Background: This 177-nucleotide RNA was probed chemically with DMS and 2A3. The RNA was probed in 150 mM KOAc, 10 mM MgCl2 and 150 mM bicine (pH 8.5) at 24 C. For DMS, 653 sequencing reads were counted. As a SHAPE reagent, 2A3 marks flexible, mostly unpaired nucleotides at the ribose 2'-OH.

RNA sequence: GGGAACGACUCGAGUAGAGUCGAAAAUGGAACCACAACUAAUGUUGACAAAAUACGCCAGCUUCUCAAAGGUGUCACCCUUGACAAGUUGCGUGAUUAUUUAGCUGACUAUGACGUAGCAGUCACUGGUAAUAAUCGUGUUCGCACGAUUAUUACCAAAAGAAACAACAACAACAAC
Reactivity to DMS in 0.01 (KOAc 150mM, MgCl2 10mM, bicine 150mM(pH8.5), 24C), signal-to-noise 1, nucleotides 027 to 126: u010g010g040a250a230c050c040a080c030a060a090c100u020a080a110u020g020u000u000g010a100c020a090a030a030a120u000a010c030g000c040c000a010g000c040u000u010c220u000c020a030a020a010g000g030u000g010u040c190a080c080c000c000u030u000g010a000c030a000a030g020u000u000g000c180g020u000g020a090u000u010a000u000u030u000a120g020c040u020g030a020c020u020a080u010g020a070c040g000u000a040g030c080a170g020u000c030a020c230u060
Reactivity to 2A3 in 0.01 (KOAc 150mM, MgCl2 10mM, bicine 150mM(pH8.5), 24C), signal-to-noise 1, nucleotides 027 to 126: u060g050g000a030a000c010c000a040c010a050a030c020u210a180a110u250g030u110u030g030a030c030a010a070a040a090u060a020c000g000c030c010a010g040c000u010u000c010u000c000a080a060a000g000g020u070g140u100c060a040c020c000c000u000u000g000a010c010a010a000g000u020u010g050c080g040u030g030a010u030u080a020u000u090u030a050g060c020u020g030a150c010u080a100u280g080a040c110g030u060a020g090c040a020g030u020c010a010c110u030